[RMDB]
RNA sequence: GGGAACGACUCGAGUAGAGUCGAAAACCGAGGUGACGCUCGUCCUCCUUCGGAUGCCCAGGUCGGACCGCGAGGAGGUGGAGAUGCCAUGCCGACCCGAAGAGGAAAGAAGGACGCGAGACGCAAACCCAACAAUUAACUUCGGUUAAUUGUUGGGAAAAGAAACAACAACAACAAC
Reactivity to DMS in 0.01 (KOAc 150mM, MgCl2 10mM, bicine 150mM(pH8.5), 24C), signal-to-noise 2, nucleotides 027 to 126: c020c020g010a150g010g010u000g010a090c120g000c070u000c020g000u000c010c130u020c010c000u000u020c000g020g010a190u010g020c050c020c000a160g000g030u000c020g020g000a170c020c110g000c100g000a110g020g010a060g000g010u010g000g000a110g000a120u000g010c010c050a050u000g020c020c010g020a090c000c020c110g020a100a060g010a170g010g000a020a140a090g000a070a030g010g000a060c300g000c090g010a010g000a180c060g010c090a050a080a130
Reactivity to 2A3 in 0.01 (KOAc 150mM, MgCl2 10mM, bicine 150mM(pH8.5), 24C), signal-to-noise 2, nucleotides 027 to 126: c010c000g010a070g000g100u150g020a120c030g000c050u020c030g080u070c000c030u030c000c000u030u000c010g090g050a140u250g070c030c000c000a010g040g000u000c010g010g030a050c030c000g010c040g030a090g070g040a100g000g000u020g050g020a200g030a080u130g040c010c000a040u100g040c010c000g000a000c000c000c000g080a120a030g090a070g040g030a040a030a020g000a000a010g000g010a000c000g000c000g030a000g010a010c010g000c070a010a030a050